[RMDB]
RNA sequence: GGGAACGACUCGAGUAGAGUCGAAAAGACACUCUAGACUUUGUAACGUGGCCCAAAGAUGACCACGACUGCGAUGGGACUCUGAUACUUGAGGCCAAGAUCUGGGACGCCAGCGAGUACAAGGAGAGAUGAUAACGACGUUCGCGUCGUUAUCAUCAAAAGAAACAACAACAACAAC
Reactivity to 2A3 in 0.01 (KOAc 150mM, MgCl2 10mM, bicine 150mM(pH8.5), 24C), signal-to-noise 2, nucleotides 027 to 126: g040a040c020a020c100u020c020u040a060g050a090c040u000u030u140g020u060a130a010c030g040u000g030g000c060c010c000a050a210a000g100a080u060g030a010c000c000a000c050g080a100c150u170g030c050g130a190u020g000g030g020a040c010u030c000u060g040a070u080a240c020u090u090g070a090g040g000c020c000a060a040g080a040u040c020u010g000g000g130a080c110g030c050c010a020g010c020g020a060g030u010a030c000a000a050g080g000a060g030a020
Reactivity to DMS in 0.01 (KOAc 150mM, MgCl2 10mM, bicine 150mM(pH8.5), 24C), signal-to-noise 2, nucleotides 027 to 126: g000a150c150a130c060u000c030u000a110g000a240c010u000u000u000g060u000a050a160c050g030u010g010g030c020c010c030a110a030a100g000a060u000g010a160c020c000a030c000g050a100c220u000g010c050g010a090u020g010g000g000a270c060u000c030u020g030a150u000a030c080u000u000g000a070g020g000c040c010a040a090g000a070u000c020u000g040g000g000a130c130g000c020c010a030g020c030g020a080g020u000a050c080a040a070g020g000a080g000a130
Chemical mapping of a 177-nucleotide RNA with 2A3 and DMS.